[RMDB]
RNA sequence: GGGAACGACUCGAGUAGAGUCGAAAACCUUCUGCGGUGAUCCUCCCUCUCCUUGUCGGUGAACCCGCUCUUGUGAGGCCUCUUCAUAGGUCCGGAGUCGACCUCCAUCUGAUCUGUUCGGGCCCUCGAUACAUUACGUCUUCGGACGUAAUGUAUCAAAAGAAACAACAACAACAAC
Reactivity to 2A3 in 0.01 (KOAc 150mM, MgCl2 10mM, bicine 150mM(pH8.5), 24C), signal-to-noise 1, nucleotides 027 to 126: c010c000u060u050c080u130g070c070g010g070u070g040a100u030c000c000u000c000c000c000u030c000u000c010c010u010u090g050u050c000g000g040u070g030a050a050c000c000c010g000c020u040c020u030u100g070u040g030a080g000g030c000c010u140c060u160u060c050a100u090a120g000g000u030c000c010g030g000a030g010u030c030g050a090c000c000u010c010c010a060u040c050u060g000a030u000c010u030g070u060u040c010g010g040g000c000c020c000u000c010
Reactivity to DMS in 0.01 (KOAc 150mM, MgCl2 10mM, bicine 150mM(pH8.5), 24C), signal-to-noise 4, nucleotides 027 to 126: c020c020u000u010c090u000g020c110g010g010u010g010a090u000c060c030u000c030c020c010u000c040u010c030c020u000u010g030u000c070g010g010u010g000a070a150c090c020c030g010c070u010c030u010u010g030u010g030a110g020g010c020c010u000c060u000u010c110a090u010a050g000g010u000c030c150g000g000a060g010u000c080g010a080c100c000u010c010c020a070u000c080u010g010a080u000c050u000g010u000u000c140g010g000g000c030c010c030u010c080